[RMDB]
RNA sequence: GGGAACGACUCGAGUAGAGUCGAAAAGGUCUUUGACCAGUCAGUUGUGAAGGGGACGUCAGCAUACCCGAGGUCGUUGUGAGAUGCCUGUUGGGGACAGAGAUGGUGUCAGCUGGGUGCUUGCUGGCUCCGCAGUGUAGUUCGCUACACUGCGGAGAAAAGAAACAACAACAACAAC
Reactivity to DMS in 0.01 (KOAc 150mM, MgCl2 10mM, bicine 150mM(pH8.5), 24C), signal-to-noise 1, nucleotides 027 to 126: g010g000u010c010u000u000u010g020a110c040c010a130g010u010c090a070g020u000u020g020u000g010a150a110g010g020g020g000a090c130g000u010c030a020g000c060a070u000a100c000c000c000g020a100g010g010u010c070g010u010u000g010u000g000a100g000a070u010g000c050c030u000g010u010u000g020g020g010g010a120c060a050g000a120g010a080u000g010g010u000g020u000c060a080g020c060u010g000g000g010u000g010c100u000u000g020c030u000g000g010

The data come from the RNA Mapping Database (RMDB), library OK2TRN.
This 177-nucleotide RNA was probed chemically with DMS.
In probing experiments dimethyl sulfate is read out at A N1 and C N3, which are open when not base-paired.
Values are in units of 0.01, from 0 to 300, in steps of 10.
Reactivities are given for positions 27 through 126.
The RNA was probed in 150 mM KOAc, 10 mM MgCl2 and 150 mM bicine (pH 8.5) at 24 C.
For DMS, 2,215 sequencing reads were counted.